[RMDB]
RNA sequence: GGGAACGACUCGAGUAGAGUCGAAAAUUCUCAGCACUCAUCAAGAAGUAGGCUUAGGCCAAUUGCUUGGUGCUGAAAGUAGAGGGAAGGUAGCACUUCGACGCCUCUAAGUACGCUGUGGGAGUAGAAAACUGGACAUCGUUCGCGAUGUCCAGAAUCUGUUAUCUGUGUUCGCACAGAUAACAGAAAAAGAAACAACAACAACAAC
Reactivity to DMS in 0.01 (KOAc 150mM, MgCl2 10mM, bicine 150mM(pH8.5), 24C), signal-to-noise 1, nucleotides 027 to 156: u010u000c030u000c000a120g020c080a140c070u000c050a120u000c000a010a020g030a080a030g000u010a100g000g000c010u010u010a180g040g020c020c010a030a140u000u010g000c030u000u000g030g030u000g000c050u000g000a080a000a080g000u000a030g010a190g020g010g030a120a080g000g000u000a180g000c100a220c000u000u000c040g000a060c130g010c070c010u000c020u000a040a090g020u000a060c060g000c010u010g060u000g000g000g020a150g000u010a090g010a070a030a130a110c000u000g010g010a030c000a010u000c000g010u000u000c280g090c080g030a000u000g010u030c020c000a010g020a030a010
Reactivity to 2A3 in 0.01 (KOAc 150mM, MgCl2 10mM, bicine 150mM(pH8.5), 24C), signal-to-noise 2, nucleotides 027 to 156: u090u020c010u000c020a010g000c030a000c030u080c000a070u060c000a080a000g030a090a060g080u100a090g040g000c030u140u120a080g070g060c000c000a040a090u060u040g010c020u000u010g010g030u000g000c010u080g040a120a090a010g050u060a000g020a020g000g010g020a030a000g040g030u060a020g070c070a040c090u010u020c060g050a050c140g080c010c000u000c000u020a020a020g060u050a020c060g000c080u050g030u090g090g030g020a050g010u140a050g170a080a030a020a060c000u000g000g000a020c000a010u000c000g030u050u030c080g000c020g130a010u000g010u010c000c000a000g000a000a000